[RMDB]
RNA sequence: GGGAACGACUCGAGUAGAGUCGAAAAGAAAAUACAAGGCUGACAAAAUCCUUUCCCAACCUCCACGUGGUGACGGCUGGAUAAUGCAUUAGAAAUGUUGCAUUUAUCAACUGGGAAGGCAAAAAAACCAACUAUAUCGGUUCGCCGAUAUAGUUGGAAAAGAAACAACAACAACAAC
Reactivity to 2A3 in 0.01 (KOAc 150mM, MgCl2 10mM, bicine 150mM(pH8.5), 24C), signal-to-noise 2, nucleotides 027 to 126: g020a010a030a010a000u120a040c020a040a040g050g030c010u040g070a040c060a040a150a010a130u130c010c000u030u060u080c030c000c000a020a040c010c010u070c010c020a050c100g110u110g070g010u010g070a050c030g030g000c040u030g000g020a010u020a040a000u010g010c000a010u010u070a110g110a090a090a030u140g010u060u020g000c020a000u000u030u130a090u030c040a010a040c050u010g000g000g020a030a000g040g070c070a000a030a000a050a000a000a080
Reactivity to DMS in 0.01 (KOAc 150mM, MgCl2 10mM, bicine 150mM(pH8.5), 24C), signal-to-noise 2, nucleotides 027 to 126: g010a070a080a070a100u020a060c090a070a040g000g010c080u000g020a150c080a040a070a110a210u000c020c020u010u020u000c010c000c030a070a100c060c010u000c040c020a080c070g000u000g010g030u000g000a130c080g020g030c050u000g000g010a020u000a000a000u000g000c000a010u000u000a010g000a120a100a120u010g010u000u000g000c000a000u000u000u000a010u000c010a030a070c080u000g000g000g000a040a040g030g000c130a010a000a050a000a020a060a090